Structure probing data (DMS and 2A3) for a 207-nucleotide construct. DMS adducts were read by reverse transcription with MarathonRT. The data come from the RNA Mapping Database (RMDB), library RNAMAK. The 2A3 profile rests on 2,306 reads. The DMS profile rests on 1,888 reads.
RNA sequence: GGGAACGACUCGAGUAGAGUCGAAAACGAGCCCCUUCGGGGGCUCGAAAAAGCGUACUACUUCGACAACAGCCCAUGACCCUCGCAAUCCCAAAUAGGAUUGACGAGCAUGGGACAUGUCGAAGUAUCGCAAAAAAGUGGUGCUUCGGCACCACAAGAUUACCACUAACUUCGGUUAGUGGUAAUCAAAAGAAACAACAACAACAAC
Reactivity to DMS in 0.01 (KOAc 150mM, MgCl2 10mM, bicine 150mM(pH8.5), 24C), signal-to-noise 1, nucleotides 027 to 156: c020g040a040g000c000c000c000c000u010u000c300g120g010g100g080g040c020u030c000g000a000a030a090a110a100g040c020g010u000a160c200u000a020c010u000u000c000g040a000c010a000a070c080a120g030c010c010c010a040u010g000a170c070c090c000u010c020g140c010a000a000u000c000c010c040a060a230a210u010a020g010g030a030u000u000g040a190c040g000a030g000c000a060u010g020g050g020a000c020a090u000g020u000c000g000a000a020g040u000a000u000c030g030c010a000a040a130a180a110a100g060u000g010g010u000g000c000u000u000c050g040g000c010a020c000c000a000c000a000a300
Reactivity to 2A3 in 0.01 (KOAc 150mM, MgCl2 10mM, bicine 150mM(pH8.5), 24C), signal-to-noise 2, nucleotides 027 to 156: c000g010a000g000c030c010c020c050u020u140c210g030g000g010g000g010c000u030c000g000a020a000a000a000a000g010c010g030u080a070c050u000a000c000u030u010c000g020a010c000a100a000c030a150g040c000c010c000a030u060g020a210c120c030c000u000c000g000c000a000a010u010c000c000c050a200a240a140u290a110g000g010a010u020u040g070a220c000g000a000g000c000a000u000g000g000g020a000c020a050u020g010u010c000g010a000a000g000u000a000u000c000g010c000a040a100a030a000a000a030g000u000g000g000u000g000c020u040u080c220g110g000c000a000c000c000a000c000a000a000